Chemical mapping of a 177-nucleotide RNA with DMS and 2A3. It was measured as part of the RMDB library OK1LIB. DMS adducts were read by reverse transcription with MarathonRT. Values cover nucleotides 27 to 126.
RNA sequence: GGGAACGACUCGAGUAGAGUCGAAAAGAUUGUUCUGCAAGUCUUCCUCAAAGCUUGGGCUAAGAAAACUGUGGACUUGACCAGUGUAUACAAUAUCGACAUCCUGAAUGAUAUACCAAAUGAGGUCUCUCCUUGGUACUUUCGAGUACCAAGGAGAAAAAGAAACAACAACAACAAC
Reactivity to DMS in 0.01 (KOAc 150mM, MgCl2 10mM, bicine 150mM(pH8.5), 24C), signal-to-noise 2, nucleotides 027 to 126: g000a090u000u000g030u030u010c040u020g040c030a030a050g000u000c000u000u000c130c030u020c170a140a210a180g000c050u030u020g000g000g000c020u020a030a250g010a000a000a090a110c110u000g000u030g000g000a010c060u000u000g000a150c030c020a090g010u020g010u020a090u010a040c080a130a170u060a010u040c000g020a060c180a080u000c040c020u000g010a120a050u050g010a070u030a060u010a110c010c070a100a060a090u000g000a050g010g010u000c070
Reactivity to 2A3 in 0.01 (KOAc 150mM, MgCl2 10mM, bicine 150mM(pH8.5), 24C), signal-to-noise 3, nucleotides 027 to 126: g000a010u080u170g040u130u030c020u020g000c010a000a040g030u000c000u040u000c010c030u030c030a050a100a000g020c040u110u170g150g020g060c000u050a080a030g040a080a220a040a020c020u090g000u030g070g010a020c030u020u030g030a050c020c010a040g000u030g060u090a060u030a100c070a080a040u020a020u170c010g080a030c050a140u080c010c010u040g050a150a150u110g060a040u050a010u020a070c000c070a020a080a130u160g050a140g030g010u000c000
About this RNA
For 2A3, 1,289 sequencing reads were counted. For 2A3 the reverse transcriptase was SuperScript II with manganese.